Overview
This 177-nucleotide RNA was probed chemically with 2A3 and DMS. 2A3 adducts were read by reverse transcription with SuperScript II with manganese. Conditions: 150 mM KOAc, 10 mM MgCl2 and 150 mM bicine (pH 8.5), 24 C. It was measured as part of the RMDB library TTRDES. Values cover nucleotides 27 to 126. For 2A3, 2,053 sequencing reads were counted.

RNA sequence: GGGAACGACUCGAGUAGAGUCGAAAAGAUAUGGAGGAAUUAACGCAACAGCCCUCAUAUCGGAAACGAUAUAGGGACAUGCGUCCAUUCCUCCUAAGUCAAACAAACCUGCUUCGGCAGGUUUGAACUUGCUCUAUGUGUUCGCACAUAGAGCAAGAAAAGAAACAACAACAACAAC
Reactivity to 2A3 in 0.01 (KOAc 150mM, MgCl2 10mM, bicine 150mM(pH8.5), 24C), signal-to-noise 1, nucleotides 027 to 126: g010a030u040a030u190g010g000a030g020g050a020a010u020u080a070a010c040g030c070a220a300c050a260g040c000c000c000u090c170a030u030a010u010c000g020g000a040a030a000c020g010a000u000a000u010a010g020g010g090a010c130a180u300g000c000g010u000c000c000a010u000u020c000c010u000c000c000u000a000a000g000u000c000a150a080a060c010a000a050a000c020c010u000g010c030u130u110c240g200g040c000a000g000g060u000u000u050g000a000a000
Reactivity to DMS in 0.01 (KOAc 150mM, MgCl2 10mM, bicine 150mM(pH8.5), 24C), signal-to-noise 2, nucleotides 027 to 126: g000a030u000a250u010g000g030a010g000g000a020a000u000u000a120a000c000g020c010a060a100c270a210g040c030c000c010u010c300a020u000a000u010c000g010g010a100a100a130c000g030a010u000a010u000a020g000g000g020a030c050a090u000g010c030g000u000c110c260a020u000u000c000c000u010c020c000u000a000a040g010u000c000a140a080a270c000a000a000a070c000c000u000g010c000u000u020c210g060g030c020a000g000g010u000u000u000g010a060a210